[RMDB]
RNA sequence: GGGAACGACUCGAGUAGAGUCGAAAAGGGGUCUCCUAAGCUCGUCACCAGGAGCUUGGAUUUAUUGAGCUGAAGCCUCCACGGCUCAAUUGUCAGCUCCUGCAAGUCGAGCGAUGGAGACGGAGGCACCCAAAACCCACAUGUUCGCAUGUGGGAACCCUAAUUAUUACUUCGGUAAUAAUUAGGGAAAAGAAACAACAACAACAAC
Reactivity to 2A3 in 0.01 (KOAc 150mM, MgCl2 10mM, bicine 150mM(pH8.5), 24C), signal-to-noise 4, nucleotides 027 to 156: g070g010g030g010u010c000u000c010c000u040a090a030g000c000u000c020g080u070c050a190c300c000a050g000g000a010g020c060u150u220g150g000a040u250u300u180a010u000u070g000a000g000c010u020g030a120a010g000c000c000u010c000c000a020c010g000g000c000u010c010a000a000u020u020g020u030c120a010g000c000u000c020c000u020g010c070a270a280g030u060c000g010a000g010c020g000a000u080g000g000a000g000a000c000g000g000a000g000g000c010a040c000c010c000a030a080a100a140c000c010c000a000c000a010u020g030u080u090c240g010c160a000u000g000u000g000g000g000a000a020
Reactivity to DMS in 0.01 (KOAc 150mM, MgCl2 10mM, bicine 150mM(pH8.5), 24C), signal-to-noise 2, nucleotides 027 to 156: g000g020g050g010u000c010u000c000c030u010a130a300g010c000u000c000g010u000c060a260c110c020a020g010g010a030g020c000u000u000g050g010a080u020u000u000a050u010u000g010a050g000c000u000g000a060a180g050c040c000u000c010c020a300c000g010g040c000u000c010a010a010u010u000g020u000c020a070g010c000u020c020c000u000g020c020a060a130g030u000c020g020a020g000c010g000a120u010g010g000a030g010a010c020g000g030a050g090g040c050a140c010c000c020a080a050a150a120c000c000c000a000c000a010u010g000u000u000c300g000c010a020u000g020u010g010g010g010a000a020